This 177-nucleotide RNA was probed chemically with 2A3. For 2A3 the reverse transcriptase was SuperScript II with manganese. It was measured as part of the RMDB library RFM100.
RNA sequence: GGGAACGACUCGAGUAGAGUCGAAAACACUCUAGCUAGUUAAGCUUGCUAAGAGAAUAACGGUAUCCUGGAACUCCUAAAACAUGUUACUACAAGACAAGUCUUGAUAACAAUAUAACUUUUAGCUACGCAUUAUGCUCUUCGGAGCAUAAUGCGUAAAAGAAACAACAACAACAAC
Reactivity to 2A3 in 0.01 (KOAc 150mM, MgCl2 10mM, bicine 150mM(pH8.5), 24C), signal-to-noise 2, nucleotides 027 to 126: c010a050c000u000c000u000a000g000c030u030a000g040u110u080a140a030g260c000u000u000g000c000u060a190a000g000a000g050a040a060u160a220a040c150g000g000u050a060u050c000c000u010g020g040a040a000c010u100c000c010u000a010a010a010a010c110a050u070g000u050u000a040c040u090a090c000a010a010g040a030c030a140a070g090u010c040u000u070g010a050u000a200a000c050a060a000u010a010u020a280a180c130u090u040u020u050a000g000c050u110
For 2A3, 704 sequencing reads were counted.